An RNA of 177 nucleotides, treated with DMS and 2A3 and read out base by base.
[RMDB]
RNA sequence: GGGAACGACUCGAGUAGAGUCGAAAAGAUAUGGAGUCCCUGACGCGAUAAGAGCGUAUCGGAAACGAUAUAGCUCUUUUGACGCGUCGAGACUCCUAAGUCAAAGUAUGGUGUUCGCACCAUACAACCAUUUGAGAGACUUCGGUCUCUCAAAUGGAAAAGAAACAACAACAACAAC
Reactivity to DMS in 0.01 (KOAc 150mM, MgCl2 10mM, bicine 150mM(pH8.5), 24C), signal-to-noise 2, nucleotides 027 to 126: g000a010u000a250u010g000g000a050g000u000c000c010c020u020g030a000c000g040c020g030a110u000a030a010g010a000g010c000g010u000a010u000c000g040g010a070a030a080c000g000a020u000a000u000a110g010c010u000c000u010u000u000u020g020a190c090g020c000g010u000c000g000a020g010a010c000u010c000c000u000a000a070g010u000c010a160a140a210g010u000a000u000g010g010u000g020u000u020c300g000c030a020c000c010a010u000a000c010a170a180
Reactivity to 2A3 in 0.01 (KOAc 150mM, MgCl2 10mM, bicine 150mM(pH8.5), 24C), signal-to-noise 2, nucleotides 027 to 126: g010a000u030a000u110g010g010a000g020u010c040c000c190u180g020a000c000g080c000g140a190u090a300a000g000a000g000c020g020u000a010u000c010g030g000a040a000a020c020g000a000u010a020u030a090g000c000u000c000u010u020u000u050g020a010c000g000c000g020u000c000g000a010g000a000c000u000c000c020u000a020a010g000u030c060a220a020a050g010u000a010u010g020g020u010g030u040u110c300g060c140a010c000c000a000u000a000c000a020a010

About this RNA:
The DMS profile rests on 2,602 reads. DMS adducts were read by reverse transcription with MarathonRT.